[RMDB]
Conditions: 150 mM KOAc, 10 mM MgCl2 and 150 mM bicine (pH 8.5), 24 C. This 207-nucleotide RNA was probed chemically with 2A3 and DMS. DMS adducts were read by reverse transcription with MarathonRT.
RNA sequence: GGGAACGACUCGAGUAGAGUCGAAAAGUCUGUGCGUUUCCAUUUGAGUAUCCUGAAAACGGGCUUUUCAGCAUGGAACGUACAUAUUAAAUAGUAGGCGUGCAUAGUGGCCCGUAUAGCAGGCAUUGAGGCGAGGAUUGUUUCGACAAUCCUCGAAACGGUCUUGGAUAUUCGUAUCCAAGACCGUAAAAGAAACAACAACAACAAC
Reactivity to 2A3 in 0.01 (KOAc 150mM, MgCl2 10mM, bicine 150mM(pH8.5), 24C), signal-to-noise 2, nucleotides 027 to 156: g050u030c070u060g070u050g070c020g000u000u070u000c010c020a070u130u080u120g110a080g120u150a160u160c000c020u010g060a000a030a010a040c020g000g030g000c020u000u030u000u080c030a030g040c040a020u000g080g000a170a010c000g030u020a010c000a010u050a000u030u140a030a050a050u210a020g090u010a030g030g110c060g030u010g020c020a030u020a170g110u060g090g000c000c000c040g000u060a060u030a040g060c030a010g000g070c040a060u080u220g060a120g090g070c000g000a010g000g000a000u020u020g000u050u100u030c000g000a000c000a000a000u020c000c010u000c000g000a000a000
Reactivity to DMS in 0.01 (KOAc 150mM, MgCl2 10mM, bicine 150mM(pH8.5), 24C), signal-to-noise 1, nucleotides 027 to 156: g000u000c060u030g020u000g010c040g000u000u010u010c010c010a180u010u030u010g010a230g010u000a100u010c070c000u000g020a050a070a090a050c010g000g000g020c050u000u000u000u000c040a090g020c080a050u000g000g000a040a030c040g000u010a040c000a030u000a050u000u000a090a050a220u020a080g000u020a070g020g000c050g030u010g040c050a150u010a140g000u010g040g020c060c000c000g010u010a100u000a190g030c050a040g000g000c050a180u000u000g010a130g010g040c000g000a050g020g010a030u000u000g020u030u000u000c260g010a070c000a000a010u000c000c000u000c000g010a010a090